[RMDB]
RNA sequence: GGGAACGACUCGAGUAGAGUCGAAAAAGCCUCAACCUGCCAGGCUCAAGGGAUCCUCCUGCCUUAGCCUCCUAAGUAGCUGGGACUACAGUUGUGCGCCACCAUGACUGGCUAAUUCUUAAAAGAAAUGUUUUCAGGCUAGGCAUGGUGACCCAUGCCUACCUCCGUUCUUCGGAACGGAGGUAGGAAAAGAAACAACAACAACAAC
Reactivity to DMS in 0.01 (KOAc 150mM, MgCl2 10mM, bicine 150mM(pH8.5), 24C), signal-to-noise 1, nucleotides 027 to 156: a030g020c040c030u000c040a040a040c040c030u010g060c060c090a080g000g020c040u000c060a070a100g040g000g040a080u000c040c020u000c070c040u000g010c010c010u000u000a080g040c040c000u000c000c050u030a010a070g000u000a070g000c020u000g030g020g020a150c040u020a050c020a090g030u040u000g000u000g030c030g030c030c020a060c050c000a060u000g000a030c000u000g010g040c020u000a060a140u000u000c040u000u000a080a110a120a180g010a030a070a080u010g000u000u010u020u020c060a160g000g000c020u010a000g000g010c000a020u000g030g010u000g000a060c030c000c030a070u000g000
Reactivity to 2A3 in 0.01 (KOAc 150mM, MgCl2 10mM, bicine 150mM(pH8.5), 24C), signal-to-noise 2, nucleotides 027 to 156: a000g070c000c000u060c000a050a060c010c040u050g060c000c020a010g000g030c010u060c070a030a030g000g030g020a070u050c030c020u020c010c010u030g050c010c020u030u020a010g010c020c020u100c000c010u140a160a070g010u040a030g030c030u080g000g010g010a040c030u040a010c020a020g010u020u010g030u070g010c050g030c060c000a010c000c000a000u000g020a010c000u010g000g000c000u040a060a090u040u030c020u030u190a100a110a010a020g110a090a090a070u220g080u070u060u090u180c060a050g000g030c030u030a000g020g020c020a000u030g000g000u010g000a020c050c000c000a000u040g010

The record gives the reactivity of an RNA of 207 nucleotides to DMS and 2A3. The reactions ran in a buffer of 150 mM KOAc, 10 mM MgCl2 and 150 mM bicine (pH 8.5), at 24 C. The data come from the RNA Mapping Database (RMDB), library OK3TST. For 2A3 the reverse transcriptase was SuperScript II with manganese.